[RMDB]
RNA sequence: GGGAACGACUCGAGUAGAGUCGAAAAGGCGGAAUCCCGAAAUCCCUCCCAAACGCGCGCAAAUAAAGGGAGGGAGGGAUGAUCCCGAAAGCGCGCGACGGGGUGAAGGCUCAACGGCCGAACGCCAGCGCAGCUGGAGGUUCGCCUCCAGCUGCGCAAAAGAAACAACAACAACAAC
Reactivity to DMS in 0.01 (KOAc 150mM, MgCl2 10mM, bicine 150mM(pH8.5), 24C), signal-to-noise 1, nucleotides 027 to 126: g050g000c000g100g000a030a040u000c000c000c000g050a090a090a100u000c000c000c000u120c000c000c000a010a120a260c060g000c050g010c010g070c000a060a080a050u010a030a210a290g000g000g000a100g000g000g000a000g070g000g000a220u010g000a080u000c000c000c000g000a000a210a100g000c070g000c000g000c000g000a070c180g000g000g000g000u000g040a040a140g000g010c030u000c030a100a200c290g000g020c050c060g000a160a070c100g000c000c000a160
Reactivity to 2A3 in 0.01 (KOAc 150mM, MgCl2 10mM, bicine 150mM(pH8.5), 24C), signal-to-noise 3, nucleotides 027 to 126: g060g040c040g020g080a070a060u000c000c000c000g000a050a040a010u020c030c000c010u000c000c020c030a160a200a070c080g020c000g030c000g000c030a080a190a100u210a140a170a090g010g010g000a070g010g000g000a010g000g000g000a050u120g000a030u060c000c000c000g000a010a020a020g000c000g000c000g000c000g000a020c020g010g030g000g000u050g090a100a010g040g000c000u030c110a070a000c050g020g020c000c000g000a080a000c010g040c000c000a000
An RNA of 177 nucleotides, treated with DMS and 2A3 and read out base by base. Reactivities are rounded to 0.1 and cut off at 0 and 3. DMS adducts were read by reverse transcription with MarathonRT. For 2A3 the reverse transcriptase was SuperScript II with manganese. Conditions: 150 mM KOAc, 10 mM MgCl2 and 150 mM bicine (pH 8.5), 24 C. For DMS, 1,178 sequencing reads were counted.